[RMDB]
RNA sequence: GGGAACGACUCGAGUAGAGUCGAAAAUACUCGCGAAUUAGAAGUACAUAUCAUUCACUGUUCUAUGAUAAAACACCUGUUGUGAUAUAAAAUAACAGGCUGUAGACGUAAUAUCUGUGCUCCUAAAGCUAUUCUUGUCAUUCGUGACAAGAAUAGCAAAAGAAACAACAACAACAAC
Reactivity to 2A3 in 0.01 (KOAc 150mM, MgCl2 10mM, bicine 150mM(pH8.5), 24C), signal-to-noise 3, nucleotides 027 to 126: u070a000c010u010c010g050c050g090a050a180u040u010a030g020a060a010g000u020a010c000a000u030a010u060c050a020u020u040c080a020c040u040g110u180u030c010u030a050u070g090a140u190a210a150a020a000c030a020c020c010u000g010u020u000g010u010g050a010u060a020u040a300a100a030a000u010a000a010c000a000g000g000c030u020g000u000a000g000a000c010g010u000a010a000u000a010u020c030u010g010u010g000c000u040c020c020u020a070a020a000
Reactivity to DMS in 0.01 (KOAc 150mM, MgCl2 10mM, bicine 150mM(pH8.5), 24C), signal-to-noise 2, nucleotides 027 to 126: u000a090c030u000c030g000c190g000a080a180u000u000a030g010a020a040g010u000a020c020a020u000a060u000c220a060u000u000c140a020c060u010g010u010u010c010u000a000u000g020a170u000a090a080a150a200c170a080c000c010u000g020u000u000g020u000g010a140u010a120u020a070a130a070a000u030a010a000c000a020g000g010c170u000g010u000a010g000a040c040g030u000a000a000u000a010u000c080u000g000u010g010c010u000c010c000u000a040a000a110